[RMDB]
RNA sequence: GGGAACGACUCGAGUAGAGUCGAAAAGAUAUGGAGCGGAUAGACAUGCGAUCGUCGGAAACGACAUCGCAACAGCUAUCCCGCUCCUAAGUCAAAAGGAACUGUGUCCUUCGGGACACAGUUCCAACUGCUAGGGAUAGUUCGCUAUCCCUAGCAGAAAAGAAACAACAACAACAAC
Reactivity to 2A3 in 0.01 (KOAc 150mM, MgCl2 10mM, bicine 150mM(pH8.5), 24C), signal-to-noise 1, nucleotides 027 to 126: g000a000u020a000u080g000g010a000g010c010g020g020a020u010a040g130a300c160a170u070g000c010g020a000u050c280g030u020c020g020g000a020a020a000c000g000a000c000a000u000c000g010c010a010a050c060a010g020c000u000a000u070c130c000c000g000c000u000c000c000u010a020a000g010u010c030a000a030a090a220g030g000a010a000c000u020g000u020g010u000c010c030u040u140c300g030g010g010a010c000a000c000a000g010u000u000c000c000a010a000
Reactivity to DMS in 0.01 (KOAc 150mM, MgCl2 10mM, bicine 150mM(pH8.5), 24C), signal-to-noise 2, nucleotides 027 to 126: g000a030u000a300u010g000g000a010g020c010g010g000a010u000a010g000a090c120a210u000g010c000g010a020u010c250g010u000c000g010g000a050a040a150c000g010a000c010a010u000c000g010c000a020a050c300a160g000c020u000a000u000c090c030c030g030c020u000c000c000u010a000a050g020u000c060a090a090a100a130g000g000a000a030c010u010g000u010g010u010c000c000u000u000c240g020g020g000a000c000a000c030a000g000u000u000c000c000a010a040
Structure probing data (2A3 and DMS) for a 177-nucleotide construct. The reactions ran in a buffer of 150 mM KOAc, 10 mM MgCl2 and 150 mM bicine (pH 8.5), at 24 C. Source: RMDB library TTRDEL, as collected in RNAgym. DMS adducts were read by reverse transcription with MarathonRT.